[RMDB]
RNA sequence: GGGAACGACUCGAGUAGAGUCGAAAAGCGCGCGGGCGGGGGAGGCUCGGCGCCGCGGUCUAUAAAUAGGCGCUGCUCCGCCACCGCCGCUGCCGCCGCCCCCGCGGCUGGAUCCGGGCCAGGUGGGAUUGUCACACUGUUUCGACAGUGUGACAAUAAAAGAAACAACAACAACAAC
Reactivity to DMS in 0.01 (KOAc 150mM, MgCl2 10mM, bicine 150mM(pH8.5), 24C), signal-to-noise 1, nucleotides 027 to 126: g020c030g040c160g020c050g000g020g000c040g090g000g010g030g010a020g000g000c130u030c090g040g000c000g030c030c100g000c150g000g000u000c110u000a120u010a050a160a140u020a110g020g020c000g020c030u030g000c040u020c030c000g010c010c010a090c060c020g000c010c030g000c040u010g040c000c000g000c000c060g000c020c030c030c030c070g020c010g000g010c000u010g030g000a120u010c040c020g000g000g010c040c020a050g010g040u020g020g000g010